[RMDB]
The record gives the reactivity of an RNA of 177 nucleotides to 2A3 and DMS. The reactions ran in a buffer of 150 mM KOAc, 10 mM MgCl2 and 150 mM bicine (pH 8.5), at 24 C.
RNA sequence: GGGAACGACUCGAGUAGAGUCGAAAAAUUAAGAUUACCGCUCACUUAACCAGUGGUGUUCCAGGUAAGCAUAAGGCAGGGGGACAAUCACAAAGAAGGUUCGACAGGGUCAUCGAACAAUUGGCUCCAUCAUGGGUCGUUUCGACGACCCAUGAUGAAAAGAAACAACAACAACAAC
Reactivity to 2A3 in 0.01 (KOAc 150mM, MgCl2 10mM, bicine 150mM(pH8.5), 24C), signal-to-noise 3, nucleotides 027 to 126: a000u140u110a110a060g050a120u070u150a040c000c060g050c050u040c010a050c060u090u090a140a060c010c030a060g000u060g100g020u020g010u010u060c000c000a000g140g030u080a120a110g020c060a070u050a210a080g110g000c000a020g000g010g000g090g030a010c110a040a080u050c030a040c070a060a080a080g160a070a030g100g000u050u050c020g030a000c010a040g000g000g020u070c010a000u030c010g000a060a010c010a060a060u110u090g050g000c010u030c000
Reactivity to DMS in 0.01 (KOAc 150mM, MgCl2 10mM, bicine 150mM(pH8.5), 24C), signal-to-noise 1, nucleotides 027 to 126: a090u010u010a000a070g020a110u000u000a070c020c000g060c050u020c070a040c040u000u010a020a200c070c100a150g000u000g000g000u010g030u000u010c060c000a050g020g020u020a050a080g000c070a130u030a040a150g020g000c050a020g000g060g000g000g000a090c010a030a180u000c040a060c050a030a090a110g020a110a170g000g010u000u010c000g010a020c120a150g000g000g010u010c000a030u000c000g000a070a070c130a010a100u020u000g040g070c040u000c000
Source information:
It was measured as part of the RMDB library OK1LIB.